[RMDB]
Conditions: 150 mM KOAc, 10 mM MgCl2 and 150 mM bicine (pH 8.5), 24 C. Chemical mapping of a 177-nucleotide RNA with DMS and 2A3. Source: RMDB library M2PK50, as collected in RNAgym. The 2A3 profile rests on 4,811 reads.
RNA sequence: GGGAACGACUCGAGUAGAGUCGAAAAGGGUUAGCGUUCGCGCUAACCCCAGGAUCGAACAUGUGAAAUCUCGCAGACAUGAAACGAUCAAAAGCGAGAAAACUAGACAGUCAUUCGUGACUGUCAACCCACGAGAAUUAUUCGUAAUUCUCGUGGGAAAAGAAACAACAACAACAAC
Reactivity to DMS in 0.01 (KOAc 150mM, MgCl2 10mM, bicine 150mM(pH8.5), 24C), signal-to-noise 3, nucleotides 027 to 126: g000g010g000u010u000a000g000c010g010u020u010c230g040c010g030c000u010a000a020c000c000c000c090a050g040g010a020u000c020g000a040a300c000a000u000g010u000g000a070a090a070u020c030u000c030g020c000a200g000a070c010a050u000g000a040a130a240c040g000a070u000c070a040a020a090a180g000c010g010a010g000a030a060a070a080c280u000a100g000a000c010a000g000u000c000a020u000u010c240g000u000g020a000c000u020g010u000c000a050a120
Reactivity to 2A3 in 0.01 (KOAc 150mM, MgCl2 10mM, bicine 150mM(pH8.5), 24C), signal-to-noise 3, nucleotides 027 to 126: g000g010g010u000u010a000g000c010g020u030u060c300g000c010g000c130u000a000a000c000c000c000c000a050g000g080a030u030c020g030a050a050c000a040u040g020u020g140a070a080a170u050c030u020c020g000c020a050g030a080c000a010u050g040a230a070a040c040g020a030u030c020a020a050a020a070g010c000g000a010g000a010a080a000a040c050u050a050g010a000c000a000g000u010c000a010u050u080c150g090u010g000a000c010u000g000u000c000a000a000